This 207-nucleotide RNA was probed chemically with 2A3 and DMS. The 2A3 profile rests on 679 reads. The reactions ran in a buffer of 150 mM KOAc, 10 mM MgCl2 and 150 mM bicine (pH 8.5), at 24 C.
RNA sequence: GGGAACGACUCGAGUAGAGUCGAAAAUGUGUUAAACCUAAUGAAAGAACUUUAACCUGUGCAUUUAUGUGCUACACCUACUGCUGUUGCCGACGAAGAACCUAACAUUCAGUGAUAAAACCAAGCUCAUCUGAUUUUAAGGUGAUGAGUUAGCUAAAAAUAUAUUAGGGUUCGCCCUAAUAUAUUUAAAAGAAACAACAACAACAAC
Reactivity to 2A3 in 0.01 (KOAc 150mM, MgCl2 10mM, bicine 150mM(pH8.5), 24C), signal-to-noise 2, nucleotides 027 to 156: u040g010u010g020u050u070a150a110a030c000c000u060a120a050u190g040a060a110a180g040a070a030c040u050u110u110a100a040c050c040u050g040u070g040c020a020u010u150u250a080u270g070u050g040c020u030a010c020a010c030c030u090a080c020u020g020c010u030g030u030u080g040c010c000g010a030c020g000a010a000g010a060a060c000c010u000a040a040c030a090u020u100c000a020g010u010g110a030u060a090a040a000a030c020c000a050a000g030c010u020c000a050u000c000u020g020a130u060u000u060u300a100a080g070g000u050g020a000u010g010a000g000u020u020a010g010c010u090a050a050
Reactivity to DMS in 0.01 (KOAc 150mM, MgCl2 10mM, bicine 150mM(pH8.5), 24C), signal-to-noise 2, nucleotides 027 to 156: u000g000u000g080u010u000a060a060a110c020c020u010a200a120u000g010a160a150a130g020a050a090c030u000u000u000a040a070c020c040u020g010u000g010c020a090u000u000u000a060u050g020u010g050c000u000a050c060a030c020c040u010a040c020u010g030c050u000g020u000u010g010c000c040g000a090c080g000a110a090g000a060a050c060c030u000a070a100c080a090u010u000c000a090g040u010g020a170u010a030a040a090a130c020c030a030a130g050c030u010c010a030u000c000u020g030a150u000u010u000u010a080a160g020g020u010g010a040u000g020a120g030u000u000a050g020c030u020a010a080
Source: RMDB library OK3TST, as collected in RNAgym. 2A3 adducts were read by reverse transcription with SuperScript II with manganese. Reactivities are given for positions 27 through 156.